RNA sequence: GGGAACGACUCGAGUAGAGUCGAAAAGCUAGCCUCUACGGAGGCUAGCAAGCAGGUACUUACGAGUACCUGCAAUGAUGCCCCUCACCCACACUUGAAGAUCCCGGGUGGGCGAGGGACUGGCAGGGAUCAACGCCAGGUCUACGGACCUGGCGAACAUGGAUUUAUACUUCGGUAUAAAUCCAUGAAAAGAAACAACAACAACAAC
Reactivity to 2A3 in 0.01 (KOAc 150mM, MgCl2 10mM, bicine 150mM(pH8.5), 24C), signal-to-noise 1, nucleotides 027 to 156: g010c000u000a000g000c030c010u020c010u030a060c210g090g000a000g030g000c000u000a000g000c000a000a000g000c000a000g000g030u000a000c020u060u100a070c280g110a010g010u000a000c000c000u000g000c000a000a020u050g020a070u280g060c000c000c000c020u010c020a030c000c000c000a000c000a050c020u020u100g100a130a040g010a040u000c010c000c000g000g000g000u010g000g000g010c000g010a010g030g010g040a040c090u120g040g110c110a170g000g000g000a010u000c020a010a030c000g000c010c020a010g010g010u000c000u010a080c300g050g000a000c000c030u010g000g000c000g000a000a000
Conditions: 150 mM KOAc, 10 mM MgCl2 and 150 mM bicine (pH 8.5), 24 C. Chemical mapping of a 207-nucleotide RNA with 2A3. Reactivities are given for positions 27 through 156.